Structure probing data (2A3 and DMS) for a 177-nucleotide construct. It was measured as part of the RMDB library VIROID. The 2A3 profile rests on 2,334 reads. For DMS the reverse transcriptase was MarathonRT. The reactions ran in a buffer of 150 mM KOAc, 10 mM MgCl2 and 150 mM bicine (pH 8.5), at 24 C.
RNA sequence: GGGAACGACUCGAGUAGAGUCGAAAACAGGGGAAUAGGCGAAGGGGAACCCGACCUUUGCAAAGAAUUUGUGGGGAAACCCCAUUUUCUUUUAGCAAAUUAGUCGGAAUUCUCCCGUUAGCCAUUCGUACUUUUACAUGUUCGCAUGUAAAAGUACAAAAGAAACAACAACAACAAC
Reactivity to 2A3 in 0.01 (KOAc 150mM, MgCl2 10mM, bicine 150mM(pH8.5), 24C), signal-to-noise 1, nucleotides 027 to 126: c030a010g000g030g040g010a030a100u100a200g050g000c020g030a040a020g000g020g000g000a000a000c010c000c000g010a000c000c000u020u000u000g000c010a000a000a020g010a000a010u000u080u080g130u300g010g000g000g000a030a020a030c010c000c010c000a000u020u010u010u000c000u000u080u010u090a030g030c000a000a020a100u120u090a090g010u020c020g010g000a000a050u030u010c100u100c000c010c000g050u020u030a010g000c000c000a000u000u000c010
Reactivity to DMS in 0.01 (KOAc 150mM, MgCl2 10mM, bicine 150mM(pH8.5), 24C), signal-to-noise 2, nucleotides 027 to 126: c050a160g000g000g030g000a050a040u000a070g060g010c000g000a120a300g010g000g000g040a030a030c130c000c000g000a000c010c100u010u000u000g020c000a030a020a010g000a000a000u000u000u000g010u020g070g000g010g010a100a110a190c000c000c000c000a000u000u000u000u000c010u000u000u020u020a140g010c000a010a000a010u000u020a060g010u000c010g000g010a060a300u000u000c020u000c010c000c020g000u010u000a220g010c010c010a070u000u000c070